[RMDB]
RNA sequence: GGGAACGACUCGAGUAGAGUCGAAAACGCGAGGGCGCGACUGCCUCGACGGCGCUUGACAUGACUUCGGCUAAUAUGGAGCCGUCUUUUUACUCGGCCAACCGUCCGUUUAUUAACCGCCUGAUGGACUACUUCCAUCGCGCCGCCGCUCUGGCGCCAAGCACAAAGGGUUCGCCCUUUGUGCUUGAAAAGAAACAACAACAACAAC
Reactivity to DMS in 0.01 (KOAc 150mM, MgCl2 10mM, bicine 150mM(pH8.5), 24C), signal-to-noise 2, nucleotides 027 to 156: c050g010c020g000a120g000g000g040c020g010c020g020a100c090u040g010c010c010u000c020g000a060c020g000g000c030g050c090u010u020g000a050c100a090u010g010a060c060u000u010c050g030g030c050u000a070a100u000a160u010g020g010a120g030c010c010g030u000c000u010u000u000u000u000a070c050u000c040g000g000c030c020a100a050c030c020g030u000c000c020g010u000u000u000a090u020u000a100a090c050c030g000c020c020u010g030a050u000g030g000a120c100u010a100c150u000u000c020c010a010u000c010g010c060g000c040c100g020c030c040g010c070u000c070u020g010g010c030g000c000
Reactivity to 2A3 in 0.01 (KOAc 150mM, MgCl2 10mM, bicine 150mM(pH8.5), 24C), signal-to-noise 4, nucleotides 027 to 156: c040g020c040g070a070g020g020g010c030g000c070g150a090c080u160g030c000c040u060c050g040a020c010g000g000c000g010c030u100u270g050a060c050a110u140g020a060c050u070u040c040g020g010c010u040a070a090u150a260u300g190g050a030g010c000c000g010u030c010u050u120u030u030u050a070c040u050c010g000g010c000c020a030a030c040c000g040u050c010c020g020u030u080u060a160u080u150a080a060c020c020g010c050c060u040g010a010u010g010g000a010c070u090a060c030u300u020c000c010a020u000c000g040c020g000c000c010g040c020c020g040c040u030c020u070g060g020c000g000c020